Conditions: 150 mM KOAc, 10 mM MgCl2 and 150 mM bicine (pH 8.5), 24 C. Chemical mapping of a 177-nucleotide RNA with DMS. The data come from the RNA Mapping Database (RMDB), library OK2TRN. For DMS, 1,193 sequencing reads were counted.
RNA sequence: GGGAACGACUCGAGUAGAGUCGAAAAGACAUAGAUUUCGAAGAAAUUCAGAUCGCUCUCUAUCAGGACAAUACGGCCGAGAAGCUUGGGCCCUACUCCCCCUCCUUGAAGGUGCCCGUACUGUUACUAUAUGCAUCCAGUUCGCUGGAUGCAUAUAAAAAGAAACAACAACAACAAC
Reactivity to DMS in 0.01 (KOAc 150mM, MgCl2 10mM, bicine 150mM(pH8.5), 24C), signal-to-noise 2, nucleotides 027 to 126: g040a140c100a120u020a120g010a060u000u000u010c050g030a020a050g020a100a110a120u000u000c010a090g020a090u000c010g010c050u010c030u000c010u000a090u000c140a030g000g000a060c080a020a070u000a070c120g000g000c000c040g030a070g000a060a120g000c030u010u000g000g000g020c020c000c020u000a060c060u000c030c010c010c000c010u020c000c000u020u000g010a070a070g030g020u000g000c060c000c030g000u000a050c110u010g020u000u000a080c160